[RMDB]
RNA sequence: GGGAACGACUCGAGUAGAGUCGAAAACGCACUUCUCCUGAUCAAUUACUGGUUUGAACGUUCUCCACGCAGACAUAUCGUUCUUUUCCGUGUUGCCUGGCUCACUUACAAUAGCUGCUAUGGGGAGGUACUCAGCAUGGUUCGCCAUGCUGAGUACAAAAGAAACAACAACAACAAC
Reactivity to DMS in 0.01 (KOAc 150mM, MgCl2 10mM, bicine 150mM(pH8.5), 24C), signal-to-noise 2, nucleotides 027 to 126: c120g110c060a080c050u000u030c020u030c010c030u030g010a040u000c110a070a130u000u000a070c110u000g000g000u000u000u000g020a030a170c140g000u000u000c030u000c040c000a040c210g040c070a020g050a030c170a090u000a070u000c100g010u000u000c000u010u020u030u000c010c040g090u010g110u000u040g000c030c000u000g000g030c010u000c060a070c130u000u080a060c130a110a050u020a100g000c000u000g060c040u020a160u020g000g000g000g000a120g040
Reactivity to 2A3 in 0.01 (KOAc 150mM, MgCl2 10mM, bicine 150mM(pH8.5), 24C), signal-to-noise 4, nucleotides 027 to 126: c070g010c020a020c040u050u050c020u060c040c000u040g040a140u080c000a070a150u090u150a150c050u070g050g060u070u060u110g110a100a030c040g020u040u050c020u000c050c000a030c060g010c060a010g040a080c040a110u200a030u120c020g020u020u050c000u000u030u010u010c010c030g010u090g030u100u050g030c010c010u020g000g110c010u010c030a040c020u050u140a030c030a080a110u050a110g010c010u020g010c000u030a050u060g000g020g040g000a020g050